RNA sequence: GGGAACGACUCGAGUAGAGUCGAAAAAGUUUGUAUUAGGUCUGUUAAAUUCUCCCAGAUCAUGCCUAUUGGUGUUUACAGACGAGUAUGGUAUAGACCAUAUAUUACUAUUCUCUCUCUCAGGAGAGGAGAAUAGAUGCAUACAAAGGAGAAGCAAGCCUAUUAAUGAGUUCGCUCAUUAAUAGGCAAAAGAAACAACAACAACAAC
Reactivity to 2A3 in 0.01 (KOAc 150mM, MgCl2 10mM, bicine 150mM(pH8.5), 24C), signal-to-noise 2, nucleotides 027 to 156: a000g040u040u030u060g000u040a110u080u140a060g070g000u000c010u010g030u040u110a050a140a130u070u030c020u020c000c000c000a000g000a030u040c030a050u170g010c030c030u130a190u150u190g000g000u040g020u020u120u000a030c020a020g020a010c000g000a010g020u020a000u000g020g000u080a170u130a270g170a050c000c000a000u020a000u020a010u080u140a070c000u000a000u000u000c010u000c000u020c000u000c000u000c110a110g000g200a000g060a020g020g010a020g000a000a000u010a000g000a010u110g020c030a040u080a150c020a010a100a010g000g010a020g010a040a040g080c070a050a120
Reactivity to DMS in 0.01 (KOAc 150mM, MgCl2 10mM, bicine 150mM(pH8.5), 24C), signal-to-noise 2, nucleotides 027 to 156: a190g020u000u000u000g000u000a100u000u000a080g020g020u000c020u000g000u010u000a040a100a160u010u000c020u000c000c000c020a190g020a080u010c010a070u000g000c000c030u000a070u010u020g040g040u010g000u000u000u000a080c110a090g020a100c000g010a190g000u000a020u030g020g030u000a230u010a180g010a130c010c000a090u000a040u000a090u000u000a110c000u000a010u000u000c000u000c000u000c000u000c010u020c200a260g000g000a050g020a060g040g000a040g010a020a010u000a030g000a090u000g020c090a110u000a110c070a030a080a100g000g010a080g030a080a070g020c080a060a220
Source information: The record gives the reactivity of an RNA of 207 nucleotides to 2A3 and DMS. Source: RMDB library OK3TST, as collected in RNAgym. The DMS profile rests on 3,285 reads.